[RMDB]
RNA sequence: GGGAACGACUCGAGUAGAGUCGAAAAGGCCGCGCGUACCGGCUCGAGUGGUACGCGUUUGGCCGGUGAAGGUCCUGGUUUGGCCCGCGAAAGGCGCGUGUUAGGCGGGCCAAUGCGCGCGGAAAAAGCAUCAGCGUACGUUCGCGUGCGCUGGUGCAAAAGAAACAACAACAACAAC
Reactivity to DMS in 0.01 (KOAc 150mM, MgCl2 10mM, bicine 150mM(pH8.5), 24C), signal-to-noise 6, nucleotides 027 to 126: g000g000c010c000g000c000g010c010g020u000a010c000c010g010g020c060u030c120g010a100g010u020g000g010u000a000c000g000c000g000u000u030u030g030g010c010c000g000g020u010g010a130a080g020g000u000c000c010u000g010g000u000u010u010g000g010c010c000c000g010c010g010a080a090a160g000g000c010g000c030g010u010g000u010u020a130g010g000c000g000g000g010c000c000a010a000u010g010c050g000c030g000c030g000g000a070a080a070a110a100
Reactivity to 2A3 in 0.01 (KOAc 150mM, MgCl2 10mM, bicine 150mM(pH8.5), 24C), signal-to-noise 2, nucleotides 027 to 126: g010g010c010c000g000c000g000c000g000u000a000c000c010g100g020c050u040c040g020a020g050u100g000g010u010a000c000g000c000g000u020u030u040g000g000c000c000g000g000u070g040a070a020g040g010u010c000c010u010g060g000u010u030u030g000g000c000c000c000g010c000g080a090a030a020g100g000c020g000c030g030u110g040u030u090a100g030g030c000g000g000g020c000c000a000a000u010g000c010g000c010g000c000g010g040a050a060a000a000a000
Conditions: 150 mM KOAc, 10 mM MgCl2 and 150 mM bicine (pH 8.5), 24 C.
This 177-nucleotide RNA was probed chemically with DMS and 2A3.
High 2A3 reactivity points to a flexible backbone, as in loops and unpaired stretches.
Values cover nucleotides 27 to 126.